Chemical mapping of a 177-nucleotide RNA with DMS and 2A3. For DMS the reverse transcriptase was MarathonRT. For 2A3 the reverse transcriptase was SuperScript II with manganese.
[RMDB]
RNA sequence: GGGAACGACUCGAGUAGAGUCGAAAAUGUCUCCAUCCAUUGCCAAUCAGCUGUCAUUAACCACGCAAGACUGUAACGGAGUGCUAAAUUACCGUGUGAAUACCAUAACAAAGAUUGGUCACUCGGAUGACGUUGAGGCAUUCGUGCCUCAACGUCAAAAAGAAACAACAACAACAAC
Reactivity to DMS in 0.01 (KOAc 150mM, MgCl2 10mM, bicine 150mM(pH8.5), 24C), signal-to-noise 2, nucleotides 027 to 126: u050g010u010c000u040c000c000a020u000c060c040a090u030u000g060c000c010a050a120u000c000a190g000c050u000g010u000c080a060u000u000a230a210c160c030a070c200g010c060a030a110g000a090c110u000g050u020a060a170c110g010g010a000g070u000g010c080u030a050a050a040u000u000a090c010c000g060u000g010u040g000a120a030u000a300c080c000a070u010a010a000c300a080a120a080g000a090u000u020g040g010u000c000a020c020u000c040g000g000a110
Reactivity to 2A3 in 0.01 (KOAc 150mM, MgCl2 10mM, bicine 150mM(pH8.5), 24C), signal-to-noise 2, nucleotides 027 to 126: u100g010u020c020u000c000c000a120u010c000c000a000u000u130g070c010c000a100a070u000c040a030g010c000u010g080u030c000a050u100u080a120a110c060c000a060c010g040c030a050a090g040a110c020u000g040u050a020a050c030g050g020a020g030u080g040c000u030a010a090a130u230u140a140c020c000g000u000g000u000g040a060a040u080a060c020c020a050u050a150a120c060a140a130a040g170a060u040u040g060g000u010c010a000c000u030c030g000g020a000